[RMDB]
RNA sequence: GGGAACGACUCGAGUAGAGUCGAAAACAAAAACCGAUCAAAAAGAUCGGAACAAUGUGCGCCGAUCGAGGACGGGCACAACAAAAGGAGAAAAGCGCAAAGAAAAGCGCAACUCCAUCCUCGACAACAUCCGACUGAGCUUCGGCUCAGUCGGAUGAAAAGAAACAACAACAACAAC
Reactivity to 2A3 in 0.01 (KOAc 150mM, MgCl2 10mM, bicine 150mM(pH8.5), 24C), signal-to-noise 1, nucleotides 027 to 126: c130a000a020a000a000a030c000c020g030a020u020c070a000a190a190a000a030g000a000u000c010g000g130a000a010c000a030a030u020g030u000g030c260g290c120c000g060a130u000c000g000a000g010g020a000c000g000g000g000c070a000c000a060a050c020a030a150a030a030g000g020a010g010a020a090a000a000g000c000g000c120a120a000a000g280a070a170a040a020g000c010g000c000a000a000c000u000c020c020a000u020c000c000u000c000g000a000c060a130a000